[RMDB]
RNA sequence: GGGAACGACUCGAGUAGAGUCGAAAACUUCUCCUCCGCCCUUCCAGAAGCUUAUUCUUCACUGCAUUUAACCGAAUCUGCGUUUACAUUUAGAGUGGCAGGAGAGGCUUUGCUUCCUGUUAAAAGAAUUUCAAGCAUUACUUGAGGCAGGUGGGAAAGAUAUCGUUGACUUCGGUCAACGAUAUCUAAAAGAAACAACAACAACAAC
Reactivity to 2A3 in 0.01 (KOAc 150mM, MgCl2 10mM, bicine 150mM(pH8.5), 24C), signal-to-noise 2, nucleotides 027 to 156: c010u040u030c020u040c020c010u010c020c000g060c000c000c050u050u080c020c030a030g000a150a010g000c060u080u030a050u100u130c050u080u040c050a070c160u150g020c020a040u050u140u160a130a040c050c020g030a100a070u010c030u050g030c000g070u020u100u240a040c060a110u150u210u190a030g000a010g090u060g010g000c060a010g000g040a060g000a020g010g000c020u110u050u080g050c000u030u010c000c000u020g040u050u040a080a100a020a000g060a020a070u020u180u200c060a060a000g010c060a090u060u080a150c010u040u030g000a050g050g020c070a020g010g050u030g020g030g110a050a130
This 207-nucleotide RNA was probed chemically with 2A3. Source: RMDB library OK3TST, as collected in RNAgym. Reactivities are given for positions 27 through 156.